[RMDB]
The record gives the reactivity of an RNA of 207 nucleotides to DMS and 2A3. It was measured as part of the RMDB library ARCHII. For DMS the reverse transcriptase was MarathonRT. Conditions: 150 mM KOAc, 10 mM MgCl2 and 150 mM bicine (pH 8.5), 24 C. Reactivities are given for positions 27 through 156. For 2A3 the reverse transcriptase was SuperScript II with manganese. For 2A3, 4,048 sequencing reads were counted.
RNA sequence: GGGAACGACUCGAGUAGAGUCGAAAAAGACGAUAACCUUGCUUCGGUUCUCCACACCAGCGGGACCGGUGCCUGGUACGAAUCCUGGGGUCGUCGUUGUACUCGUGCGAGUAAUCUACGAUCGCUACAACGCGCUAAGCAAUGGAGAUGAUUCUUGACCCAUAUAAUACUUCGGUAUUAUAUGGGUAAAAGAAACAACAACAACAAC
Reactivity to DMS in 0.01 (KOAc 150mM, MgCl2 10mM, bicine 150mM(pH8.5), 24C), signal-to-noise 2, nucleotides 027 to 156: a040g010a110c060g000a180u000a120a040c020c020u000u010g020c000u000u000c030g000g000u000u010c010u010c040c030a100c120a210c210c110a100g000c050g000g030g010a300c000c000g020g000u000g030c010c040u000g000g020u000a130c060g020a100a090u010c020c020u010g000g000g050g020u000c020g030u000c010g000u000u010g000u000a050c050u000c040g010u010g010c000g000a120g040u010a050a110u000c010u000a070c010g000a070u010c040g020c060u010a080c060a040a100c040g030c040g010c060u000a030a080g040c050a050a090u000g010g000a110g020a190u010g000a200u000u000c020u010u000g010
Reactivity to 2A3 in 0.01 (KOAc 150mM, MgCl2 10mM, bicine 150mM(pH8.5), 24C), signal-to-noise 4, nucleotides 027 to 156: a000g070a030c060g050a120u090a140a070c000c010u010u030g010c020u060u060c000g000g010u130u040c070u060c060c030a120c020a070c040c060a050g020c120g010g020g000a000c000c000g010g010u000g030c000c020u020g000g000u050a010c030g010a030a040u020c000c010u040g000g010g010g020u060c030g020u030c030g000u020u010g030u020a010c020u010c040g040u040g140c160g040a030g050u080a060a160u040c010u040a010c010g000a030u100c080g010c090u010a010c010a030a020c020g020c010g010c080u100a080a020g060c040a060a130u180g050g010a130g030a090u130g030a060u030u030c000u010u020g030